[RMDB]
RNA sequence: GGGAACGACUCGAGUAGAGUCGAAAAAGACAGGGCAAAUGCCACAAAAAUGAUGUAAAUUUACAUGGAGGAAAAGUAGAAUCUGCCUGGUUUGUAGGCAGCAGAAGACAUUUUUCAUCAGUGGGCAGGUGUUCUUUACCUUUUGUAGAAAUGGGAGACCUCUAAUGCAAUUCGUUGCAUUAGAGGUAAAAGAAACAACAACAACAAC
Reactivity to 2A3 in 0.01 (KOAc 150mM, MgCl2 10mM, bicine 150mM(pH8.5), 24C), signal-to-noise 4, nucleotides 027 to 156: a000g070a010c050a020g000g020g000c010a030a070a060u120g000c010c010a090c050a050a130a050a010a030u090g000a010u030g020u110a090a020a100u080u130u090a080c070a070u150g050g030a060g050g060a100a050a030a030g060u130a060g050a050a070u020c000u000g010c010c010u080g020g130u050u090u200g120u080a010g010g000c000a000g000c000a010g040a090a000g030a010c030a030u050u060u020u050u060c020a040u040c000a020g030u070g010g010g010c010a000g010g020u030g000u010u020c000u050u030u070a070c000c000u050u040u040u090g090u090a070g080a090a080a090u120g010g050g000a050g070
Reactivity to DMS in 0.01 (KOAc 150mM, MgCl2 10mM, bicine 150mM(pH8.5), 24C), signal-to-noise 3, nucleotides 027 to 156: a100g010a100c090a100g010g020g030c020a050a060a060u010g030c020c000a110c050a040a050a080a100a070u000g000a100u000g020u010a030a130a110u010u010u000a070c040a110u000g020g000a090g000g010a040a010a040a080g030u000a090g000a150a160u000c010u000g020c020c020u000g030g020u000u000u010g030u000a050g010g030c020a040g000c050a060g020a050a040g010a140c050a070u000u000u000u000u010c010a050u000c040a100g020u010g030g030g020c030a040g000g010u000g030u000u000c020u000u000u010a080c030c010u010u010u070u010g040u000a150g000a020a080a050u010g000g000g010a200g020